[RMDB]
RNA sequence: GGGAACGACUCGAGUAGAGUCGAAAAGCGGCGGCGGGAACGAUGGCCGGUGUUAAGCUACUGAUGCCCGGUUAUGAGUUUGCGCAGAAAAACUCAGAAUUACAGGCUGUGAUCGGAGUGGCAAAAGACUCCGCCGAAAUGGCCGCACUCCGCAAGCCUGUAGAUGACCAUUCGUGGUCAUCUACAGAAAAGAAACAACAACAACAAC
Reactivity to DMS in 0.01 (KOAc 150mM, MgCl2 10mM, bicine 150mM(pH8.5), 24C), signal-to-noise 1, nucleotides 027 to 156: g010c000g040g040c040g050g020c040g060g010g020a070a040c040g010a230u010g000g020c030c000g040g080u000g000u010u010a070a130g040c000u000a260c050u010g030a180u000g000c020c000c020g000g010u020u000a040u010g000a020g010u000u010u000g020c120g000c250a270g020a070a110a020a020a050c000u020c010a070g000a100a040u000u010a110c050a030g040g010c000u020g020u000g070a110u000c030g000g000a060g030u000g010g000c020a070a130a120a300g010a070c010u000c040c010g050c040c010g020a040a090a070u010g010g010c000c020g000c010a050c020u000c010c000g040c060a100a130g010c050
Reactivity to 2A3 in 0.01 (KOAc 150mM, MgCl2 10mM, bicine 150mM(pH8.5), 24C), signal-to-noise 2, nucleotides 027 to 156: g010c020g010g030c010g010g020c020g020g020g040a070a070c040g050a100u080g050g000c130c020g020g010u090g020u030u090a110a060g030c050u060a060c060u070g040a110u180g010c000c040c030g040g000u080u030a070u050g000a010g010u000u020u090g050c150g000c120a120g210a060a140a000a010a000c000u000c000a030g050a040a070u190u090a080c000a010g020g020c030u100g020u110g110a060u120c050g120g010a040g020u030g020g020c020a080a080a080a000g030a030c010u020c020c000g000c000c010g050a120a070a040u140g090g020c000c010g030c020a140c020u000c010c030g000c000a020a030g010c000